[RMDB]
RNA sequence: GGGAACGACUCGAGUAGAGUCGAAAAGUCGCCGCAUCUACAUCAACGCCCAGCGCGGGCGAGGGAGGCAUCCUACGGGGGUGACCCAUUCGCCGGCAUGGUAGAGGACGGCAAGAUUGCCACGACGGCACUAUAAUGCCUUCGGGCAUUAUAGUGCAAAAGAAACAACAACAACAAC
Reactivity to 2A3 in 0.01 (KOAc 150mM, MgCl2 10mM, bicine 150mM(pH8.5), 24C), signal-to-noise 1, nucleotides 027 to 126: g100u070c030g000c010c000g000c010a040u010c000u020a040c020a090u140c060a110a060c070g030c020c030c010a050g040c300g020c110g100g010g010c030g000a000g020g020g000a250g030g000c000a010u050c000c010u040a140c180g300g010g000g000g020u030g130a290c000c000c000a080u040u030c010g020c020c020g080g000c000a030u070g090g010u030a010g010a040g050g060a010c010g010g000c010a000a000g070a080u060u150g050c030c020a090c060g100a010c040g050
Reactivity to DMS in 0.01 (KOAc 150mM, MgCl2 10mM, bicine 150mM(pH8.5), 24C), signal-to-noise 3, nucleotides 027 to 126: g020u000c040g020c030c120g010c040a180u000c010u000a050c040a120u000c130a080a150c120g000c040c020c020a120g010c160g030c040g000g010g020c010g010a010g010g010g010a110g010g000c000a010u010c000c010u010a100c260g030g020g010g000g000u000g000a090c030c000c000a190u020u000c020g030c010c010g000g010c050a110u000g000g000u000a050g000a020g020g010a160c060g010g010c050a080a050g000a050u000u010g000c020c010a130c080g000a070c160g020
An RNA of 177 nucleotides, treated with 2A3 and DMS and read out base by base. The reactions ran in a buffer of 150 mM KOAc, 10 mM MgCl2 and 150 mM bicine (pH 8.5), at 24 C. The 2A3 profile rests on 1,909 reads. For 2A3 the reverse transcriptase was SuperScript II with manganese. High DMS reactivity at an A or C suggests that its Watson-Crick edge is free.